[RMDB]
RNA sequence: GGGAACGACUCGAGUAGAGUCGAAAAGAUAUGGAUUGUAGGGAGCCAUCCGUCGGAAACGACGGUAUGGCUUUGAUCUACACGGUCCUAAGUCAAACCGCAGCUAGAGUUCGCUCUAGCUGCGGAACCCGAUACUUUAGUUCGCUAAAGUAUCGGGAAAAGAAACAACAACAACAAC
Reactivity to DMS in 0.01 (KOAc 150mM, MgCl2 10mM, bicine 150mM(pH8.5), 24C), signal-to-noise 3, nucleotides 027 to 126: g020a030u000a010u010g000g010a000u010u010g010u000a000g010g000g000a000g000c000c000a030u000c000c000g020u000c010g000g010a010a020a030c010g010a010c000g000g020u010a000u010g020g020c000u000u000u010g000a080u010c000u000a010c000a020c300g030g000u000c000c000u000a030a050g010u000c000a130a070a230c020c000g000c000a020g000c000u000a010g010a000g010u000u010c270g020c010u000c000u000a000g020c000u000g000c010g000g000a010a010